[RMDB]
About this RNA
An RNA of 177 nucleotides, treated with DMS and read out base by base.
RNA sequence: GGGAACGACUCGAGUAGAGUCGAAAAGUGGUCGCAGAGCCGACAGUUUGCCCACACCUGGUGAUCACGCCAUCGGUCGGCAUCGAGAAGGGCGGCCGACCGUACUUCACCGGUGGCGUCCGGUUGAAAGGCUCAGCAGAUUCGUCUGCUGAGCCUUAAAAGAAACAACAACAACAAC
Reactivity to DMS in 0.01 (KOAc 150mM, MgCl2 10mM, bicine 150mM(pH8.5), 24C), signal-to-noise 1, nucleotides 027 to 126: g020u000g010g010u000c060g020c030a140g000a130g010c080c020g000a100c000a120g000u020u000u000g010c000c000c040a150c130a070c120c040u000g030g030u020g000a090u010c100a070c060g020c110c130a140u000c020g000g000u000c000g000g020c010a030u000c050g000a070g050a190a110g000g010g040c050g020g000c050c060g000a000c020c010g000u000a020c090u030u000c050a040c040c010g020g000u000g010g000c130g010u010c030c010g040g010u000u000g010a070